[RMDB]
RNA sequence: GGGAACGACUCGAGUAGAGUCGAAAAAUCAGAGGGCGCUAUCAUGCAAACUAGGAUUGUCUGCUCAUGCACAGAACCAACUACCGAUAACUAACAGUGCAUGAAGGUUAGUUAUUCCAGAUUAAUUAAAACUCGUAAUUCUUCGGAAUUACGAGAACACUUUAGCAAGGUUCGCCUUGCUAAAGUGAAAAGAAACAACAACAACAAC
Reactivity to DMS in 0.01 (KOAc 150mM, MgCl2 10mM, bicine 150mM(pH8.5), 24C), signal-to-noise 2, nucleotides 027 to 156: a100u000c050a080g010a100g000g020g070c220g010c080u000a130u000c060a090u010g010c010a120a190a130c080u000a030g020g000a150u000u000g020u000c050u000g000c010u010c070a070u000g070c030a100c000a100g020a080a120c060c050a070a150c040u000a150c060c010g000a120u000a040a070c020u000a020a040c040a100g000u000g040c020a090u000g000a020a140g030g020u000u000a000g020u010u000a030u000u000c030c030a140g000a210u010u010a040a250u000u000a070a060a050a140c020u010c010g020u010a010a000u000u000c000u010u000c300g040g010a040a000u010u000a000c000g020a000g010a040a060
Reactivity to 2A3 in 0.01 (KOAc 150mM, MgCl2 10mM, bicine 150mM(pH8.5), 24C), signal-to-noise 6, nucleotides 027 to 156: a010u050c030a020g030a040g050g030g000c010g000c030u120a160u300c080a050u260g010c020a020a030a040c020u030a030g050g030a040u040u040g040u070c030u050g030c000u000c010a010u010g000c010a020c000a020g040a100a060c070c040a060a090c070u190a140c070c060g010a020u000a020a000c000u000a000a010c000a030g020u010g050c010a010u020g020a010a020g090g000u010u010a000g000u000u000a010u100u060c030c010a050g040a250u100u170a060a070u110u120a050a160a050a040c000u000c000g000u000a000a010u000u010c010u010u040c110g090g000a000a000u000u000a000c000g000a000g000a000a000